RNA sequence: GGGAACGACUCGAGUAGAGUCGAAAAAUACUUCUCAGGAUGGCGCGUUGCAGUCCAACAAGAUCCAGGGACUGUACAGAAUUUUCCUAUACCUCGAGUCGGGUUUGGAAUCUAAGGCUGACUCGCUAAAACUUUACGUGGUUCGCCACGUAAAGAAGCACAUCUCAAUGUUCGCAUUGAGAUGUGCAAAAGAAACAACAACAACAAC
Reactivity to 2A3 in 0.01 (KOAc 150mM, MgCl2 10mM, bicine 150mM(pH8.5), 24C), signal-to-noise 1, nucleotides 027 to 156: a010u100a040c030u010u000c010u000c020a010g180g000a040u070g000g080c010g000c030g090u070u070g010c000a000g000u030c010c010a020a020c110a240a080g110a090u130c070c070a070g090g000g000a010c000u000g060u050a020c020a040g190a240a040u030u000u080u000c020c010u040a060u040a100c000c010u010c050g010a000g020u020c010g020g020g000u000u060u040g040g060a070a010u000c040u030a100a020g060g010c020u010g060a020c000u030c010g000c020u050a030a060a080a130c000u000u000u000a000c000g000u000g000g000u030u030c070g030c070c000a000c000g020u000a000a000a000g000a020a000